[RMDB]
An RNA of 177 nucleotides, treated with DMS and 2A3 and read out base by base. The data come from the RNA Mapping Database (RMDB), library RFMREP.
RNA sequence: GGGAACGACUCGAGUAGAGUCGAAAAGCUAUGAAGAUACGAUGACGAGAAUGACGGUUUUCUUCGAUUUGGGUACCAAAGUUCUUUUGGUAUUUGAUGAGAAGCGACCUCAACGUGAUUCUAAAUGCACCAACAAAAACUUCGGUUUUUGUUGGUGAAAAGAAACAACAACAACAAC
Reactivity to DMS in 0.01 (KOAc 150mM, MgCl2 10mM, bicine 150mM(pH8.5), 24C), signal-to-noise 2, nucleotides 027 to 126: g000c070u010a090u040g010a090a100g000a130u000a050c050g000a030u000g030a080c060g000a190g010a060a070u010g060a040c180g030g000u010u010u010u000c000u000u000c010g000a300u010u000u000g010g000g000u000a010c010c000a010a010a010g000u000u010c140u020u000u010u000g010g010u010a000u000u000u000g000a010u010g000a300g010a010a000g030c300g000a010c010c010u000c010a070a050c020g020u000g000a040u000u000c040u010a020a100a070u000g000
Reactivity to 2A3 in 0.01 (KOAc 150mM, MgCl2 10mM, bicine 150mM(pH8.5), 24C), signal-to-noise 1, nucleotides 027 to 126: g030c030u060a060u250g120a050a020g020a060u060a080c060g070a080u050g080a010c050g010a030g090a300a130u080g050a030c170g010g000u040u030u070u050c000u050u000c000g020a000u000u000u000g020g020g040u000a000c010c000a000a000a020g100u300u300c100u040u160u060u000g020g010u000a010u000u030u020g020a030u000g000a000g000a000a000g000c000g030a000c000c000u010c010a010a020c050g010u020g040a060u080u000c010u100a000a140a030u140g060
The 2A3 profile rests on 1,094 reads. Values cover nucleotides 27 to 126. For DMS, 925 sequencing reads were counted.